Structure probing data (2A3) for a 207-nucleotide construct. Reactivities are rounded to 0.1 and cut off at 0 and 3. 2A3 adducts were read by reverse transcription with SuperScript II with manganese.
RNA sequence: GGGAACGACUCGAGUAGAGUCGAAAAUUGCAAGGUUACUGCAUGCGCCGCUUCAUCCACUUAUAGGUGGUUUACGAUGGCCGACUGGAUUUUGAAAAGAAUCCGUGGUUGGUAUACUCAUGGGAGAUAUCACCAGAAUGAGAUGGAGAUAAAACCGCCCCUACCUCUACUUCGGUAGAGGUAGGGGAAAAGAAACAACAACAACAAC
Reactivity to 2A3 in 0.01 (KOAc 150mM, MgCl2 10mM, bicine 150mM(pH8.5), 24C), signal-to-noise 1, nucleotides 027 to 156: u160u040g010c020a050a040g170g000u050u030a010c020u000g080c000a020u000g250c060g090c200c060g000c020u000u000c020a080u050c000c040a110c110u190u070a060u120a220g000g010u010g000g000u030u000u050a060c000g050a030u040g030g000c010c000g040a000c050u070g000g000a020u030u010u010u120g050a070a100a030a030g020a010a010u000c000c000g060u170g000g000u070u000g000g010u010a090u120a190c030u050c020a050u110g020g160g000a110g040a060u120a000u140c000a000c000c000a000g090a130a090u000g000a030g000a170u020g040g030a050g000a010u250a020a100a010a010c010c020g070

Record summary:
2A3 is a SHAPE reagent: it acylates the 2'-hydroxyl of flexible nucleotides of all four kinds.